[RMDB]
RNA sequence: GGGAACGACUCGAGUAGAGUCGAAAAAGCACGGUUUUUGAGGACGCAUUUUAUCCGUGCGGUAAUGCCCUCCUUUACACUUUCUCGCAUGGUGCGGGAGUGUGGAGAGGAAACAAAAGCUAGUCUCGAUAGGCGGUUAACUUCGGUUAACCGCCAACUAUCGUAAACUGUUCGCAGUUUACGAUAGAAAAGAAACAACAACAACAAC
Reactivity to DMS in 0.01 (KOAc 150mM, MgCl2 10mM, bicine 150mM(pH8.5), 24C), signal-to-noise 2, nucleotides 027 to 156: a130g000c010a030c000g010g000u020u000u010u000u000g010a120g020g010a060c050g030c050a120u000u000u000u000a160u000c010c020g020u000g000c000g030g040u000a040a100u000g000c000c010c000u000c010c000u000u010u010a050c020a020c010u000u000u010c000u000c020g010c010a300u010g040g010u010g040c010g020g000g000a010g030u000g010u000g010g000a060g000a070g010g010a080a080a070c130a050a040a050a080g010c040u000a150g000u000c010u000c120g000a160u020a110g030g040c020g000g000u000u000a000a010c010u000u010c300g020g000u000u000a010a010c020c000g010c000c010a000a020
Reactivity to 2A3 in 0.01 (KOAc 150mM, MgCl2 10mM, bicine 150mM(pH8.5), 24C), signal-to-noise 6, nucleotides 027 to 156: a000g000c010a000c000g000g010u010u020u010u020u040g100a120g020g020a020c030g010c080a080u020u010u010u030a050u020c000c010g000u000g000c020g000g020u090a070a040u140g040c000c000c000u040c000c000u020u020u020a010c000a000c000u070u150u030c020u020c010g040c020a080u250g280g020u290g170c000g000g000g000a010g000u010g000u010g010g000a040g000a010g020g030a020a060a020c070a010a020a000a000g030c060u090a030g030u010c010u000c080g040a060u130a130g000g000c000g000g000u010u000a000a000c000u050u070c220g020g000u000u000a000a000c010c000g000c000c000a000a000